[RMDB]
Structure probing data (DMS) for a 177-nucleotide construct. For DMS, 2,785 sequencing reads were counted.

RNA sequence: GGGAACGACUCGAGUAGAGUCGAAAAGAUAUGGACCAUGCCAUAAUGUGUACCGAGCGAUAAGCUGGUGUCGGAAACGACACACAGCUUUUGACGCUCCGUACACAUUAUGGCAUGGUCCUAAGUCCACUAUCGUUUGGUUCGCCAAACGAUAGUGAAAAGAAACAACAACAACAAC
Reactivity to DMS in 0.01 (KOAc 150mM, MgCl2 10mM, bicine 150mM(pH8.5), 24C), signal-to-noise 2, nucleotides 027 to 126: g010a120u000a300u020g000g020a030c010c000a020u000g000c010c000a020u000a020a000u010g030u000g040u010a000c000c260g000a000g030c000g000a210u010a020a000g020c010u000g000g000u000g000u010c000g010g000a150a070a290c000g020a010c010a000c000a100c010a000g010c000u000u000u000u000g030a210c110g020c000u010c010c200g000u000a000c020a000c000a000u000u000a000u010g000g000c000a010u000g000g000u000c000c000u000a000a060g000u000c040

Values cover nucleotides 27 to 126.